[RMDB]
RNA sequence: GGGAACGACUCGAGUAGAGUCGAAAAAUAGGCUUAUCAAUAGAGGUGGAGGGACUGGCCCGAUGAAACCCAGCAGCCAGAAAUGGUGCCAAUUCCUGCAGCGGAAACGUUGAAAGAUGAGCCGAUGCCACGUGGCACUUCGGUGCCACGAAAAGAAACAACAACAACAAC
Reactivity to 2A3 in 0.01 (KOAc 150mM, MgCl2 10mM, bicine 150mM(pH8.5), 24C), signal-to-noise 3, nucleotides 027 to 129: a000u130a060g000g000c010u000u020a000u030c020a120a140u000a110g180a100g010g030u040g010g030a000g000g010g010a040c030u020g000g030c050c000c010g030a100u070g010a000a020a010c000c000c000a000g000c000a010g150c010c000a000g020a000a090a010u070g020g000u020g020c010c000a020a030u080u000c000c000u040g120c020a010g020c000g060g000a110a040a030c010g010u020u030g000a030a030a040g000a000u010g000a000g000c010c000g010a050u260g030c010c000a060
Reactivity to DMS in 0.01 (KOAc 150mM, MgCl2 10mM, bicine 150mM(pH8.5), 24C), signal-to-noise 3, nucleotides 027 to 129: a130u050a070g000g000c030u020u050a050u020c050a000a110u300a180g020a160g100g020u030g000g010a060g020g110g000a000c100u020g090g040c010c090c000g020a120u060g030a080a120a070c070c020c010a220g010c040a050g080c050c010a120g060a120a090a100u040g010g000u010g010c000c090a040a090u080u010c050c000u030g020c040a020g010c030g030g040a040a060a060c000g040u000u070g020a100a050a130g010a030u020g010a040g020c010c030g010a100u000g020c020c000a120
About this RNA:
Structure probing data (2A3 and DMS) for a 170-nucleotide construct. 2A3 adducts were read by reverse transcription with SuperScript II with manganese. The DMS profile rests on 7,167 reads. For 2A3, 5,412 sequencing reads were counted.